An RNA of 177 nucleotides, treated with DMS and 2A3 and read out base by base. Source: RMDB library OK1LIB, as collected in RNAgym. For DMS the reverse transcriptase was MarathonRT.
RNA sequence: GGGAACGACUCGAGUAGAGUCGAAAAGACACACUCAGGUUCUUGAGAUAGAACCCAACUUAGCUAUCUCAAGUUGAAGUUGCGGAGUCAUGAUACGUCUCCAUGACUCCGAAGUGUGUGGAGACAAGAUAGUAUUCGCGUUCGCGCGAGUGCUAUCAAAAGAAACAACAACAACAAC
Reactivity to DMS in 0.01 (KOAc 150mM, MgCl2 10mM, bicine 150mM(pH8.5), 24C), signal-to-noise 9, nucleotides 027 to 126: g010a070c000a000c010a010c000u010c100a100g010g010u020u010c010u000u000g010a090g010a050u010a010g000a060a070c060c030c040a050a070c150u020u020a070g000c010u010a030u010c030u010c040a050a020g000u010u010g010a050a080g000u010u010g000c010g010g000a020g010u000c000a000u000g000a160u030a090c170g010u020c060u010c060c000a000u000g000a010c000u000c000c000g000a030a020g010u000g010u000g010u000g010g010a120g010a090c170a100a120
Reactivity to 2A3 in 0.01 (KOAc 150mM, MgCl2 10mM, bicine 150mM(pH8.5), 24C), signal-to-noise 9, nucleotides 027 to 126: g030a000c000a000c000a000c010u060c050a060g060g060u070u010c000u010u050g040a060g010a030u100a030g030a060a050c000c030c010a040a060c030u100u110a020g020c000u010a030u120c040u020c080a040a020g010u030u060g140a060a020g020u060u070g020c000g000g000a000g000u000c000a000u000g040a030u070a190c160g130u030c040u000c060c000a000u000g000a000c000u000c000c000g000a010a000g000u010g000u000g000u030g040g050a090g010a030c070a090a040